The data come from the RNA Mapping Database (RMDB), library OK2TST.
Structure probing data (2A3 and DMS) for a 177-nucleotide construct.
DMS adducts were read by reverse transcription with MarathonRT.

RNA sequence: GGGAACGACUCGAGUAGAGUCGAAAAGCGUACUGCAACAGAGCGUGCUGCACAGUUACGCGAUGCUUUACGUGAAGACAUUGAGCGUCUUGGUACAAACGCAAAUAGCUUACUUAGCUCUGAAAAACAUCUCGGGAAUGUUCGCAUUCCCGAGAUGAAAAGAAACAACAACAACAAC
Reactivity to 2A3 in 0.01 (KOAc 150mM, MgCl2 10mM, bicine 150mM(pH8.5), 24C), signal-to-noise 3, nucleotides 027 to 126: g000c010g000u020a020c020u020g040c020a080a040c000a110g110a030g080c020g000u020g020c010u050g060c070a130c080a130g050u130u280a030c020g000c010g010a040u060g010c010u040u000u030a040c040g030u060g080a030a010g060a050c050a120u080u210g020a030g030c010g000u010c040u060u080g050g000u140a110c080a080a090a000c030g020c060a000a070a100u120a050g000c030u060u060a080c020u090u080a050g010c030u000c040u050g070a070a020a050a010a020
Reactivity to DMS in 0.01 (KOAc 150mM, MgCl2 10mM, bicine 150mM(pH8.5), 24C), signal-to-noise 2, nucleotides 027 to 126: g000c010g000u000a010c050u000g000c090a080a110c090a060g000a180g000c100g000u010g020c040u020g000c250a100c100a090g000u000u010a020c020g000c070g010a070u000g020c010u000u000u000a030c070g020u000g000a050a020g000a050c050a120u000u000g000a090g000c030g010u010c030u010u000g000g020u000a040c090a050a070a030c090g020c070a110a030a060u000a050g000c030u010u000a060c150u010u000a070g010c000u010c050u010g010a030a070a040a120a160
Values cover nucleotides 27 to 126. Values are in units of 0.01, from 0 to 300, in steps of 10.